[RMDB]
RNA sequence: GGGAACGACUCGAGUAGAGUCGAAAAUCGACUUCCUUCGGGAAGUCGAAAAUAACGGUCGGCUCUUGAAGCUAGUCGAACAUGCUGCUCGACCUAGACUAAAAAGAAUCUCGUUCGCGAGAUUCAACGUUUCAUGUAUCUUCGGAUACAUGAAACGAAAAGAAACAACAACAACAAC
Reactivity to DMS in 0.01 (KOAc 150mM, MgCl2 10mM, bicine 150mM(pH8.5), 24C), signal-to-noise 2, nucleotides 027 to 126: u000c000g010a000c000u000u000c000c000u010u000c190g010g000g020a040a000g010u010c000g000a010a030a130a060u000a070a060c170g020g000u000c000g020g020c060u000c000u000u000g030a100a210g020c010u030a050g000u000c010g000a060a100c040a090u000g020c090u000g000c030u000c040g030a010c050c030u000a060g020a130c040u000a040a000a040a050a050g010a020a000u000c000u000c000g020u000u010c190g010c000g010a000g010a000u000u000c000a040a120
Reactivity to 2A3 in 0.01 (KOAc 150mM, MgCl2 10mM, bicine 150mM(pH8.5), 24C), signal-to-noise 2, nucleotides 027 to 126: u010c000g000a000c000u000u010c000c000u040u050c170g060g000g010a000a000g010u000c000g000a000a000a010a000u040a020a010c040g030g020u010c010g000g000c000u060c000u070u090g070a080a010g050c060u070a050g180u150c010g000a060a030c030a060u110g060c020u050g020c040u010c060g040a020c010c010u010a030g050a060c070u120a040a050a030a010a080g000a010a000u000c000u010c010g020u030u030c210g020c000g060a010g020a000u020u000c000a000a010